[RMDB]
RNA sequence: GGGAACGACUCGAGUAGAGUCGAAAAAGAAAUACCGUACAGCACACUCAGACUGUACGCUAAGUAAGUGUGUGUUCUAUAACGUCCAAUUGAACACACACUCCGUUGGACCGAGUGUAAGAAAAAACACAUCCAUAAGGUUCGCCUUAUGGAUGUGAAAAGAAACAACAACAACAAC
Reactivity to DMS in 0.01 (KOAc 150mM, MgCl2 10mM, bicine 150mM(pH8.5), 24C), signal-to-noise 4, nucleotides 027 to 126: a080g010a080a090a130u000a070c260c000g000u000a000c020a020g020c070a050c050a060c070u030c080a160g020a130c000u000g000u000a000c000g030c140u000a020a080g020u010a100a040g020u000g000u000g000u000g000u000u000c000u000a070u010a060a130c140g010u000c070c040a060a080u010u010g010a010a000c010a020c010a010c000a000c000u000c040c050g000u010u000g000g010a060c130c090g010a030g030u000g000u000a060a100g030a010a030a040a080a100a080
Reactivity to 2A3 in 0.01 (KOAc 150mM, MgCl2 10mM, bicine 150mM(pH8.5), 24C), signal-to-noise 3, nucleotides 027 to 126: a000g100a010a110a010u040a040c020c020g010u020a000c000a020g000c060a030c000a010c140u090c020a060g070a240c020u000g000u030a000c010g000c010u030a050a060g090u080a060a020g000u010g010u000g000u010g010u020u000c060u040a150u060a240a060c070g130u060c040c030a030a090u030u050g000a000a000c000a010c000a010c000a000c000u000c000c010g110u090u090g090g050a030c070c070g000a050g060u040g000u040a100a060g110a060a150a030a010a000a010
Source: RMDB library M2PK90, as collected in RNAgym. This 177-nucleotide RNA was probed chemically with DMS and 2A3. The 2A3 profile rests on 2,929 reads. For DMS, 3,288 sequencing reads were counted. DMS adducts were read by reverse transcription with MarathonRT.